[RMDB]
RNA sequence: GGGAACGACUCGAGUAGAGUCGAAAAAUUUGUAUUUGAAGAUUAAAGGUUAAUAUAUGAGUGGCCUUUAUAGAGUGCAAUAUAUGUAUUUGUAGACGAGGAGGAUAGUGAUCGAAUAGAUCGGCGGCAUGGGUUAACAGUUCGCUGUUAACCCAUGAAAAGAAACAACAACAACAAC
Reactivity to DMS in 0.01 (KOAc 150mM, MgCl2 10mM, bicine 150mM(pH8.5), 24C), signal-to-noise 1, nucleotides 027 to 126: a060u000u000u000g000u010a030u000u000u000g010a120a170g010a080u010u010a000a000a000g010g010u010u000a040a040u010a120u020a130u010g000a130g050u000g000g000c010c010u010u010u000a010u000a110g010a040g040u010g000c020a030a010u010a060u020a030u000g010u000a080u000u010u000g020u010a040g010a120c050g010a040g000g030a060g000g000a080u010a050g040u000g010a020u000c020g000a090a100u010a110g000a030u000c020g020g000c030g000g010

Conditions: 150 mM KOAc, 10 mM MgCl2 and 150 mM bicine (pH 8.5), 24 C. This 177-nucleotide RNA was probed chemically with DMS. The data come from the RNA Mapping Database (RMDB), library RFMREP. For DMS, 888 sequencing reads were counted.